Chemical mapping of a 177-nucleotide RNA with 2A3 and DMS. In probing experiments dimethyl sulfate is read out at A N1 and C N3, which are open when not base-paired. Conditions: 150 mM KOAc, 10 mM MgCl2 and 150 mM bicine (pH 8.5), 24 C. For DMS the reverse transcriptase was MarathonRT.
RNA sequence: GGGAACGACUCGAGUAGAGUCGAAAAAGUCUUAGGUAAAACCUAUCUGUAAGGGUUUGACAAGCCUAGAUAGGUACUUAACCUCUAAAUCGAUAAGCCGUCAGUGUCCGAUGGGGUACUGAUUGUGAAAUCGUUAACUUUUCGAAGUUAACGAUUUAAAAGAAACAACAACAACAAC
Reactivity to 2A3 in 0.01 (KOAc 150mM, MgCl2 10mM, bicine 150mM(pH8.5), 24C), signal-to-noise 9, nucleotides 027 to 126: a000g120u050c050u060u060a030g000g010u030a020a030a020a050c000c000u000a000u000c000u010g110u090a160a230g050g020g030u050u030u050g060a080c090a070a030g020c010c000u020a000g000a010u000a000g000g010u010a040c000u040u050a040a040c010c000u020c030u120a160a200a110u160c080g070a090u030a160a030g030c010c000g000u000c000a000g000u000g010u000c010c020g140a270u290g150g000g000g000u000a000c000u010g010a010u010u010g010u010g050
Reactivity to DMS in 0.01 (KOAc 150mM, MgCl2 10mM, bicine 150mM(pH8.5), 24C), signal-to-noise 9, nucleotides 027 to 126: a110g010u010c060u000u000a010g010g010u000a080a090a090a060c000c000u000a010u000c000u010g010u020a120a130g000g010g010u000u000u010g010a160c300a100a100g000c000c000u000a010g000a000u000a000g000g020u000a020c130u010u010a090a060c020c000u000c170u020a060a080a090u030c100g000a110u010a090a220g000c020c030g000u000c000a010g010u000g000u000c000c000g010a160u050g010g010g010g000u000a000c010u000g010a010u000u000g010u000g010